This 177-nucleotide RNA was probed chemically with DMS and 2A3. The data come from the RNA Mapping Database (RMDB), library M2PK50. For DMS, 1,255 sequencing reads were counted.
RNA sequence: GGGAACGACUCGAGUAGAGUCGAAAAUCCGUUGUCUUCGGACAACGGAAAAGAAGCGCGGACACAAAAGCACGAGCACGCCGUGACGCGCAAAGGCGAUAAAAAGCUCAAACUUCGGUUUGAGCAACCUGCUAGUAUGGUUCGCCAUACUAGCAGGAAAAGAAACAACAACAACAAC
Reactivity to DMS in 0.01 (KOAc 150mM, MgCl2 10mM, bicine 150mM(pH8.5), 24C), signal-to-noise 2, nucleotides 027 to 126: u000c050c000g020u000u000g020u000c000u000u020c230g030g000a000c000a020a000c000g010g000a000a030a060a120g000a160a180g010c020g020c020g030g010a160c060a050c090a030a040a150a110g000c010a060c100g000a120g010c100a090c000g000c050c040g000u000g010a120c020g000c020g020c000a010a020a110g000g030c060g010a090u030a040a050a070a120a060g000c000u000c010a000a000a000c000u000u040c210g000g000u000u000u000g000a000g000c000a000a000
Reactivity to 2A3 in 0.01 (KOAc 150mM, MgCl2 10mM, bicine 150mM(pH8.5), 24C), signal-to-noise 2, nucleotides 027 to 126: u020c000c020g000u000u000g020u020c010u010u070c220g120g000a000c000a010a000c000g000g000a010a060a000a010g050a120a030g020c000g010c000g010g070a100c010a010c030a070a110a060a030g050c010a020c120g040a070g080c080a020c100g030c020c000g010u010g000a020c010g010c000g000c030a010a080a020g030g000c020g010a000u180a070a100a010a010a000g000c000u000c000a020a010a000c000u040u040c230g080g000u000u000u010g010a010g000c000a000a010